Chemical mapping of a 207-nucleotide RNA with DMS and 2A3. For DMS, 4,166 sequencing reads were counted. The RNA was probed in 150 mM KOAc, 10 mM MgCl2 and 150 mM bicine (pH 8.5) at 24 C. DMS adducts were read by reverse transcription with MarathonRT.
RNA sequence: GGGAACGACUCGAGUAGAGUCGAAAAGUAAUAGAUAACUGGAUGCAGCGUAGGCGUCAACGCAUAUCCAGUACGAAUGGUACCUGUAAAUAAAAUAUGGCGCCUAGUACAAGUACCAACAGAAGGUUAAGCGAUGGUGAUGUCAAUCACAUUUGCAAUUUAAUUUAGCGUUCGCGCUAAAUUAAAUAAAAGAAACAACAACAACAAC
Reactivity to DMS in 0.01 (KOAc 150mM, MgCl2 10mM, bicine 150mM(pH8.5), 24C), signal-to-noise 2, nucleotides 027 to 156: g000u010a050a110u000a130g000a110u000a070a080c020u010g000g000a020u000g040c140a100g020c010g070u000a120g010g020c010g020u000c010a070a070c000g030c000a150u010a120u000c000c010a040g010u000a110c100g040a090a090u000g040g000u000a020c000c020u000g010u040a050a080a170u000a090a110a070a120u010a110u000g020g020c020g020c000c020u000a080g030u000a100c000a000a020g000u000a030c030c000a050a190c080a110g000a090a100g000g020u000u000a070a160g000c010g010a030u000g030g020u010g020a010u000g040u000c150a050a070u000c020a040c010a040u010u000u040g010c040a180
Reactivity to 2A3 in 0.01 (KOAc 150mM, MgCl2 10mM, bicine 150mM(pH8.5), 24C), signal-to-noise 4, nucleotides 027 to 156: g040u050a020a210u060a120g090a070u110a120a090c000u000g020g010a010u070g140c230a130g000c280g000u000a020g000g000c010g000u010c010a000a000c000g000c020a020u020a010u180c000c000a000g000u010a010c020g060a090a110u060g020g000u010a010c000c010u010g020u050a040a090a120u170a030a160a130a050u130a060u060g000g000c000g000c000c000u010a010g010u010a000c000a010a010g000u010a020c000c010a020a030c050a040g180a160a040g110g000u080u120a070a040g020c040g020a020u090g080g150u030g000a010u010g120u230c040a060a030u010c020a020c000a050u060u090u210g020c020a010